[RMDB]
RNA sequence: GGGAACGACUCGAGUAGAGUCGAAAAGAUAUGGACAAGCGCUCGAUAAGUACCAAUCGGAAACGAUUGUGUACUUUUGACGAGCGUGUCCUAAGUCAAAACCAUGCGGCGUUCGCGCCGCAUGGAAGAAAACAUAAGCGUUCGCGCUUAUGUUUUCAAAAGAAACAACAACAACAAC
Reactivity to DMS in 0.01 (KOAc 150mM, MgCl2 10mM, bicine 150mM(pH8.5), 24C), signal-to-noise 3, nucleotides 027 to 126: g020a040u000a300u010g010g000a020c000a070a160g040c010g020c000u000c000g030a130u020a030a010g000u000a000c000c000a010a010u000c000g010g000a090a110a150c000g000a010u000u000g000u020g000u000a010c000u000u000u010u010g000a160c100g010a010g010c000g030u000g010u010c000c000u000a030a120g000u000c040a070a090a100a190c000c010a010u000g010c000g000g000c000g020u000u010c220g020c000g030c010c020g010c000a000u000g000g000a030a050
Reactivity to 2A3 in 0.01 (KOAc 150mM, MgCl2 10mM, bicine 150mM(pH8.5), 24C), signal-to-noise 2, nucleotides 027 to 126: g000a020u050a020u110g020g000a010c050a140a230g120c050g010c090u020c010g110a160u050a270a000g000u000a000c000c000a000a010u000c010g000g000a070a040a020c030g000a010u020u040g050u090g000u120a000c000u010u000u030u070g060a020c000g000a000g000c000g010u010g000u010c000c000u010a110a020g060u000c040a000a010a130a190c000c000a000u010g020c000g000g000c040g040u070u190c300g020c000g020c180c000g000c010a000u020g000g010a020a040